Notes:
Source: RMDB library TTRDEL, as collected in RNAgym. Chemical mapping of a 177-nucleotide RNA with 2A3 and DMS. The reactions ran in a buffer of 150 mM KOAc, 10 mM MgCl2 and 150 mM bicine (pH 8.5), at 24 C. For 2A3, 2,389 sequencing reads were counted. 2A3 adducts were read by reverse transcription with SuperScript II with manganese. For DMS, 946 sequencing reads were counted. DMS adducts were read by reverse transcription with MarathonRT.
RNA sequence: GGGAACGACUCGAGUAGAGUCGAAAAGAUAUGGAGUGAGAGCUUUUGACGCUCAAAAAGUGUCGGAAACGACAUACAAAGAGCGAUAAGCUCCCUCCUAAGUCAAACUAGGUCUUCGGACCUAGAACCAUUCCUAAUCCUUCGGGAUUAGGAAUGGAAAAGAAACAACAACAACAAC
Reactivity to 2A3 in 0.01 (KOAc 150mM, MgCl2 10mM, bicine 150mM(pH8.5), 24C), signal-to-noise 2, nucleotides 027 to 126: g020a010u020a040u140g040g000a020g040u170g040a300g010a010g070c020u030u130u170u230g180a100c030g020c000u000c000a080a080a000a000a000g080u000g010u010c000g020g000a030a080a030c000g000a000c010a010u080a050c090a050a180a010g020a000g000c000g130a130u030a080a000g000c000u000c020c010c000u000c010c010u000a120a000g010u030c020a020a010a080c000u000a000g000g000u000c010u040u050c300g120g000a000c000c000u000a000g000a020a020
Reactivity to DMS in 0.01 (KOAc 150mM, MgCl2 10mM, bicine 150mM(pH8.5), 24C), signal-to-noise 2, nucleotides 027 to 126: g000a060u020a270u000g000g000a020g020u000g000a160g020a010g020c000u010u000u040u020g030a190c060g000c040u030c020a050a020a020a050a230g020u000g000u000c050g030g000a080a130a200c010g000a010c000a020u000a100c210a130a090a180g020a000g030c000g050a140u020a000a010g010c000u000c000c000c000u000c020c000u000a040a060g010u000c010a060a110a290c000u000a000g020g000u010c000u000u010c180g050g010a020c000c000u000a000g000a020a210